RNA sequence: GGGAACGACUCGAGUAGAGUCGAAAACCUAUUGUUCUGUCAAUAGUAGUCUAAAGAGGCGUGCUUUACCAAGUCAUGGUUUAGUGCGAAGCCCUCUUGACAAUGCAGUCCUUUACAGAAAUAUCCAUUUACACUGCAUCUUCGGAUGCAGUGUAAAAAAAGAAACAACAACAACAAC
Reactivity to DMS in 0.01 (KOAc 150mM, MgCl2 10mM, bicine 150mM(pH8.5), 24C), signal-to-noise 4, nucleotides 027 to 126: c140c000u010a050u020u010g010u020u020c040u020g020u000c080a020a050u000a040g020u010a120g010u000c030u020a040a010a010g000a010g020g000c010g000u000g000c000u000u000u000a000c010c000a070a180g010u050c270a140u000g000g010u000u000u000a010g030u000g000c010g000a100a070g030c300c010c000u000c000u010u000g000a020c140a120a130u030g000c100a090g000u020c050c050u000u020u020a020c060a040g000a020a110a110u030a070u030c110c110a160
Reactivity to 2A3 in 0.01 (KOAc 150mM, MgCl2 10mM, bicine 150mM(pH8.5), 24C), signal-to-noise 5, nucleotides 027 to 126: c000c000u000a040u010u110g050u000u030c010u000g030u010c000a010a020u020a090g110u020a030g010u000c070u160a230a030a010g000a000g000g040c000g000u010g000c000u010u010u010a000c000c000a070a170g130u130c060a270u100g000g000u000u000u000a000g000u010g030c010g040a090a040g050c000c010c000u010c000u000u010g000a000c000a020a060u170g030c050a020g040u060c010c010u010u060u050a020c010a010g060a040a060a010u120a040u040c060c020a020